[RMDB]
RNA sequence: GGGAACGACUCGAGUAGAGUCGAAAACCCCGUGUGGAACACACGACUAAGCUUCGGCUUAGUAAGAGCAACUUAACAUGGUAGGCUCCCCGGCGUGUCUCGAACCAUGCCGGGCCAAACCCAUAGGGCUGGCGGUCCCUGUGCGGUCAUUAUGUAAAGUAAUGAGUACUUUCGAGUACUCAUUACUAAAAGAAACAACAACAACAAC
Reactivity to DMS in 0.01 (KOAc 150mM, MgCl2 10mM, bicine 150mM(pH8.5), 24C), signal-to-noise 2, nucleotides 027 to 156: c000c010c010c040g020u000g010u000g010g020a130a230c050a040c020a050c040g000a090c010u000a000a020g000c010u000u000c300g100g030c000u000u000a020g020u010a050a100g010a080g010c020a080a110c070u010u010a130a170c040a110u010g010g050u000a120g030g040c000u000c030c000c030c000g010g000c010g060u000g010u010c050u000c200g000a130a150c160c020a030u000g030c000c040g020g010g000c000c050a020a110a100c010c000c010a050u010a110g010g000g010c040u000g000g000c070g010g010u000c010c010c010u010g030u000g020c050g020g020u000c040a110u010u010a130u000g030u000a120a120
Reactivity to 2A3 in 0.01 (KOAc 150mM, MgCl2 10mM, bicine 150mM(pH8.5), 24C), signal-to-noise 4, nucleotides 027 to 156: c010c000c000c000g010u040g000u020g050g220a170a040c040a000c000a000c090g030a010c010u000a010a000g000c000u010u170c270g070g000c000u010u000a000g010u020a030a030g030a000g010c020a010a070c030u080u130a070a040c060a060u100g050g000u060a070g060g030c010u020c010c000c010c000g000g000c000g020u010g030u030c080u070c230g080a040a020c030c000a010u020g000c000c000g010g000g000c000c000a020a000a000c000c010c000a000u010a010g020g010g010c030u050g160g040c070g040g050u140c000c000c000u000g000u010g020c170g000g020u030c030a050u050u220a050u110g060u100a120a130

Chemical mapping of a 207-nucleotide RNA with DMS and 2A3.
For 2A3, 5,114 sequencing reads were counted.
Source: RMDB library OK3TST, as collected in RNAgym.
High DMS reactivity at an A or C suggests that its Watson-Crick edge is free.
For 2A3 the reverse transcriptase was SuperScript II with manganese.